[RMDB]
RNA sequence: GGGAACGACUCGAGUAGAGUCGAAAACAGUGAAAACCCAGGAGACUGAUGGGGAAGAGGUCAUAGCAAGGGAAAUUCAACUAGAAGCUUCAAGUCCCAGGACCCCAUGCCUUGGGAGCAGUGCUUAUCCAAGGCAGUGUGAAGCCAGUUCAAAGAACGUAUAUACGACCUUCGGGUCGUAUAUACGAAAAGAAACAACAACAACAAC
Reactivity to 2A3 in 0.01 (KOAc 150mM, MgCl2 10mM, bicine 150mM(pH8.5), 24C), signal-to-noise 3, nucleotides 027 to 156: c020a030g010u030g080a000a020a080a020c010c020c020a040g070g050a070g050a020c050u080g030a060u100g030g010g000g000a000a040g010a040g000g020u060c040a070u050a020g050c070a060a090g030g000g010a040a100a080u160u110c010a030a020c020u040a030g010a140a000g060c020u040u030c030a070a030g030u040c000c000c000a010g030g070a050c010c000c000c020a040u020g010c000c000u010u010g010g030g010a000g000c030a060g070u190g020c010u040u030a030u150c000c000a000a000g000g000c000a000g010u000g010u020g040a010a010g020c040c020a030g020u150u110c040a090a090a000g050a090a000
Reactivity to DMS in 0.01 (KOAc 150mM, MgCl2 10mM, bicine 150mM(pH8.5), 24C), signal-to-noise 2, nucleotides 027 to 156: c020a090g020u000g000a150a090a100a120c040c020c050a150g020g030a110g010a150c050u000g000a100u000g030g010g000g030a110a090g010a080g000g010u000c020a160u000a170g000c060a100a170g020g000g020a060a070a140u000u000c040a070a090c050u000a050g000a100a120g030c020u000u000c020a080a180g010u000c000c010c000a090g000g000a130c010c050c020c010a050u000g020c000c010u000u000g000g020g000a050g050c000a120g010u000g000c030u000u000a120u000c050c010a020a030g000g010c010a000g000u000g020u030g000a070a030g010c000c010a120g000u000u000c070a050a100a130g000a160a220